[RMDB]
Description
An RNA of 177 nucleotides, treated with DMS and 2A3 and read out base by base. The RNA was probed in 150 mM KOAc, 10 mM MgCl2 and 150 mM bicine (pH 8.5) at 24 C. In probing experiments dimethyl sulfate is read out at A N1 and C N3, which are open when not base-paired.
RNA sequence: GGGAACGACUCGAGUAGAGUCGAAAAGCAUCUGGCCGACGUGGCGGUCGCGGCCGCAGACGUGCUCGGUUCGCCGGAGGAUGCGAUCACCCGUGCGGAGCUGCUGCGGCGGCGCGAAGCCGGCGAGCAGCACUUAAGGGUUCGCCCUUAAGUGCUGAAAAGAAACAACAACAACAAC
Reactivity to DMS in 0.01 (KOAc 150mM, MgCl2 10mM, bicine 150mM(pH8.5), 24C), signal-to-noise 8, nucleotides 027 to 126: g010c100a060u030c020u000g000g010c010c010g020a090c090g020u030g000g010c020g000g010u030c010g010c010g010g010c000c000g010c010a010g000a070c100g010u020g010c010u010c020g010g010u030u070c020g010c010c010g010g000a160g010g000a050u010g010c170g000a150u010c040a060c030c010c010g010u030g010c010g000g010a030g010c010u010g000c000u000g000c000g000g020c000g000g020c010g000c040g010a120a180g010c010c000g000g010c020g010a120g010
Reactivity to 2A3 in 0.01 (KOAc 150mM, MgCl2 10mM, bicine 150mM(pH8.5), 24C), signal-to-noise 9, nucleotides 027 to 126: g050c020a090u070c040u120g090g000c020c010g040a130c090g090u120g050g050c040g040g060u140c020g000c010g080g000c000c010g000c000a010g040a140c140g110u090g000c010u010c020g170g050u270u180c010g000c020c030g020g020a140g050g020a060u130g170c100g060a070u080c030a090c020c000c010g020u130g020c020g040g010a020g010c010u030g000c000u010g000c000g000g000c000g010g070c000g000c010g010a010a000g020c010c000g010g000c010g010a030g020